[RMDB]
RNA sequence: GGGAACGACUCGAGUAGAGUCGAAAAGAUAUGGACCCACUAGCGCUAGCUGGUAAUCGGAAACGAUUGAUAGCUUGGACCGCUACAUGUGGGUCCUAAGUCAAACACACGAGUUCGCUCGUGUGAAGUAGAAUCCUAUGUUCGCAUAGGAUUCUACAAAAGAAACAACAACAACAAC
Reactivity to 2A3 in 0.01 (KOAc 150mM, MgCl2 10mM, bicine 150mM(pH8.5), 24C), signal-to-noise 5, nucleotides 027 to 126: g020a010u060a040u120g020g000a000c000c020c000a010c020u030a010g000c010g040c080u060a030g010c000u020g040g100u120a010a000u000c000g030g040a090a030a040c030g000a000u020u040g050a040u040a050g010c020u070u140g190g090a170c130c120g030c030u060a070c070a270u260g010u000g010g020g000u000c000c000u010a000a000g000u000c010a000a040a020c000a000c000a000c000g000a000g040u120u130c270g140c160u000c000g000u010g000u000g020a010a010
Reactivity to DMS in 0.01 (KOAc 150mM, MgCl2 10mM, bicine 150mM(pH8.5), 24C), signal-to-noise 6, nucleotides 027 to 126: g010a050u000a300u010g000g010a020c000c000c000a030c010u000a030g010c000g040c050u000a020g020c000u000g010g010u020a030a000u000c010g010g010a130a100a190c000g010a010u000u000g000a130u020a010g010c000u010u020g050g010a130c300c020g000c000u010a040c300a120u000g020u000g000g000g010u000c000c000u000a010a100g000u010c030a100a110a300c000a010c000a010c000g010a010g000u000u010c230g010c000u000c000g040u000g010u000g000a030a100